About this RNA: Conditions: 150 mM KOAc, 10 mM MgCl2 and 150 mM bicine (pH 8.5), 24 C. An RNA of 170 nucleotides, treated with 2A3 and DMS and read out base by base. For 2A3 the reverse transcriptase was SuperScript II with manganese. For DMS the reverse transcriptase was MarathonRT. It was measured as part of the RMDB library 15KLIB.

[RMDB]
RNA sequence: GGGAACGACUCGAGUAGAGUCGAAAACUUGCCAAUACUACAACAGAACCACUCAAACUUUUUGCUGCUGAGACUUUACGUGCCACUGAAGAGGCGUCUAAGCAGUCUUAUGCUAUUGCCACCAUCACCGCCGGUUGCUUCGGCAACCGGAAAAGAAACAACAACAACAAC
Reactivity to 2A3 in 0.01 (KOAc 150mM, MgCl2 10mM, bicine 150mM(pH8.5), 24C), signal-to-noise 4, nucleotides 027 to 129: c020u020u050g050c000c010a030a020u070a070c010u010a010c010a080a000c000a030g030a040a020c030c020a020c020u070c020a020a100a140c060u070u030u090u160u180g020c040u000g000c000u010g010a000g000a010c010u100u120u120a060c090g020u050g050c000c000a030c050u080g100a060a010g080a110g110g000c030g020u030c030u040a030a010g020c010a000g010u000c000u040u090a040u050g040c000u020a020u030u070g000c010c000a020c020c020a000u010c000a000c060c000g070
Reactivity to DMS in 0.01 (KOAc 150mM, MgCl2 10mM, bicine 150mM(pH8.5), 24C), signal-to-noise 2, nucleotides 027 to 129: c040u020u020g030c030c060a060a060u040a180c050u060a020c020a070a040c070a090g030a050a020c020c020a130c010u050c110a070a000a070c040u050u030u070u000u010g010c040u030g070c040u020g020a050g000a080c050u020u080u010a070c280g000u000g010c040c050a100c100u050g060a060a070g030a080g080g060c040g040u000c020u000a070a050g000c010a040g040u030c060u030u060a050u050g020c010u000a070u000u070g020c000c060a080c070c010a030u010c010a050c040c110g070